The record gives the reactivity of an RNA of 177 nucleotides to DMS and 2A3. Source: RMDB library M2PK90, as collected in RNAgym. 2A3 adducts were read by reverse transcription with SuperScript II with manganese. Conditions: 150 mM KOAc, 10 mM MgCl2 and 150 mM bicine (pH 8.5), 24 C. 2A3 is a SHAPE reagent: it acylates the 2'-hydroxyl of flexible nucleotides of all four kinds.

RNA sequence: GGGAACGACUCGAGUAGAGUCGAAAAAGAAAGAGAGCGUAGCACACACACAGACUAAGUCUGACACACACCUACGCUACAUGUGUGUGUGAAGUCGAGAUAUGGACAAGUGUGUGUGAUGAAAAAACGUAUCUCGGUUCUUCGGAACCGAGAUACGAAAAGAAACAACAACAACAAC
Reactivity to DMS in 0.01 (KOAc 150mM, MgCl2 10mM, bicine 150mM(pH8.5), 24C), signal-to-noise 1, nucleotides 027 to 126: a110g000a020a080a060g000a070g000a030g000c080g010u010a110g000c000a000c000a010c000a020c000a030c000a100g000a130c010u000a050a170g000u000c000u000g000a030c020a170c000a020c000a000c000c070u010a020c020g010c080u010a070c140a030u020g010u000g000u000g000u000g020u010g000a050a020g000u000c000g000a040g010a110u010a140u000g090g000a000c040a210a100g020u000g000u000g040u000g000u000g000a000u000g000a000a120a060a040a040a120
Reactivity to 2A3 in 0.01 (KOAc 150mM, MgCl2 10mM, bicine 150mM(pH8.5), 24C), signal-to-noise 1, nucleotides 027 to 126: a000g070a030a030a000g150a000g030a000g020c050g020u040a010g020c020a000c000a000c000a000c000a030c000a010g040a010c020u080a100a060g010u000c030u000g020a000c000a010c000a000c000a000c020c000u090a020c010g040c050u100a030c050a070u160g060u010g000u000g000u000g000u000g060a100a000g000u010c010g060a020g030a120u100a050u170g000g000a040c060a180a150g020u000g010u030g010u000g000u010g000a010u040g080a080a010a030a000a000a000